[RMDB]
RNA sequence: GGGAACGACUCGAGUAGAGUCGAAAAGGGGACAGGGCCCGCAGUGGGUCGCAGUGGCGUUUGACGCGGCGAUGUCCACGCACGAAGAUCUCCUUGCCACGAUCAGGUACGUCCGCGACCGAACCGGUGCGAUUACGUAUUUCGAUACGUAAUCGCAAAAAGAAACAACAACAACAAC
Reactivity to 2A3 in 0.01 (KOAc 150mM, MgCl2 10mM, bicine 150mM(pH8.5), 24C), signal-to-noise 5, nucleotides 027 to 126: g020g010g010g030a000c040a050g040g040g090c020c010c010g000c030a040g030u150g050g040g000u010c020g000c020a030g050u260g120g010c010g000u050u150u210g040a030c000g020c000g010g000c010g020a030u050g080u090c010c000a010c020g020c000a060c040g070a080a010g020a120u010c010u010c010c000u040u050g000c010c000a050c020g020a130u060c060a020g070g060u090a050c030g050u000c000c020g010c000g050a020c030c000g040a070a000c010c020g040g060
Reactivity to DMS in 0.01 (KOAc 150mM, MgCl2 10mM, bicine 150mM(pH8.5), 24C), signal-to-noise 3, nucleotides 027 to 126: g020g020g000g000a020c060a120g000g020g010c040c020c050g000c120a110g020u000g010g010g000u040c010g000c010a040g040u010g000g000c020g000u000u000u080g010a080c000g020c040g000g010c020g000a050u010g010u010c010c010a030c060g000c060a170c180g000a140a160g000a090u010c020u010c000c030u010u000g000c020c020a120c070g000a100u000c060a130g000g010u020a020c060g010u010c010c040g020c020g010a040c050c000g030a150a120c060c030g010g000